[RMDB]
RNA sequence: GGGAACGACUCGAGUAGAGUCGAAAAUGAAAGACUAGGAAACUCGAAUAAAUAAGUGGUAAUCCUAGCGAAUCCAGGGCGAGGAAACUAGGACACUAACCAUGUGAUCCCGGACGCUAGAAAAAAAGUUAACGCUAUAGUUCGCUAUAGCGUUAACAAAAGAAACAACAACAACAAC
Reactivity to 2A3 in 0.01 (KOAc 150mM, MgCl2 10mM, bicine 150mM(pH8.5), 24C), signal-to-noise 2, nucleotides 027 to 126: u110g010a060a050a010g050a100c020u030a010g000g120a080a140a030c030u020c100g080a080a080u100a180a160a040u160a190a060g030u070g030g000u070a080a050u030c000c010u000a000g010c010g010a010a030u000c020c020a140g060g050g000c090g010a030g000g050a080a030a060c010u010a030g010g000a000c000a000c090u050a060a040c020c000a020u080g010u010g090a150u010c000c000c000g020g020a000c000g000c060u070a040g010a120a110a010a000a000a000a010
Reactivity to DMS in 0.01 (KOAc 150mM, MgCl2 10mM, bicine 150mM(pH8.5), 24C), signal-to-noise 2, nucleotides 027 to 126: u010g010a160a110a140g000a100c010u010a060g010g000a040a170a020c040u000c050g010a070a100u020a150a050a090u010a080a160g010u000g000g000u000a020a090u000c010c000u000a000g010c000g030a130a120u000c020c010a060g010g020g040c070g010a090g010g000a070a080a060c070u010a020g000g000a050c060a060c060u000a050a110c120c200a040u000g000u010g000a140u000c010c010c000g000g010a050c090g010c040u000a030g020a020a000a060a060a020a050a080